[RMDB]
RNA sequence: GGGAACGACUCGAGUAGAGUCGAAAAUUGUACGGCUUCUUCGUACUGCUGAAGAAGCAUUGAGCACAGGCGAAGUUCUUGUUAAACGACCUGAUGCUGAAGAACUUCUUGCAAUUCGUAAUGGUGCAGCGAUUAGCGGAUUCGUCCGCUAAUCGCUAAAAGAAACAACAACAACAAC
Reactivity to DMS in 0.01 (KOAc 150mM, MgCl2 10mM, bicine 150mM(pH8.5), 24C), signal-to-noise 2, nucleotides 027 to 126: u000u000g010u000a050c120g000g020c170u000u000c030u000u000c000g010u010a090c150u010g000c180u010g010a050a040g000a050a020g000c060a090u010u010g020a080g010c000a030c010a060g000g000c090g000a130a050g000u000u000c050u000u000g010u000u000a050a060a050c050g010a120c040c030u010g000a120u000g030c020u030g000a000a030g010a060a140c030u000u000c010u000u000g000c040a060a150u000u000c090g000u020a060a070u010g000g020u000g000c150
Reactivity to 2A3 in 0.01 (KOAc 150mM, MgCl2 10mM, bicine 150mM(pH8.5), 24C), signal-to-noise 1, nucleotides 027 to 126: u100u070g030u010a000c090g100g080c000u010u020c000u020u070c040g030u040a140c000u060g110c090u220g020a030a010g000a000a000g000c000a020u000u130g030a000g030c020a000c000a010g020g000c100g030a090a020g040u140u020c050u090u080g110u020u260a120a120a000c060g140a270c010c000u060g050a220u050g040c020u040g040a000a000g000a020a060c010u010u010c060u000u170g020c000a000a070u060u090c050g100u240a000a140u090g180g000u140g000c000
This 177-nucleotide RNA was probed chemically with DMS and 2A3.
The data come from the RNA Mapping Database (RMDB), library OK2TRN.
Conditions: 150 mM KOAc, 10 mM MgCl2 and 150 mM bicine (pH 8.5), 24 C.
The 2A3 profile rests on 604 reads.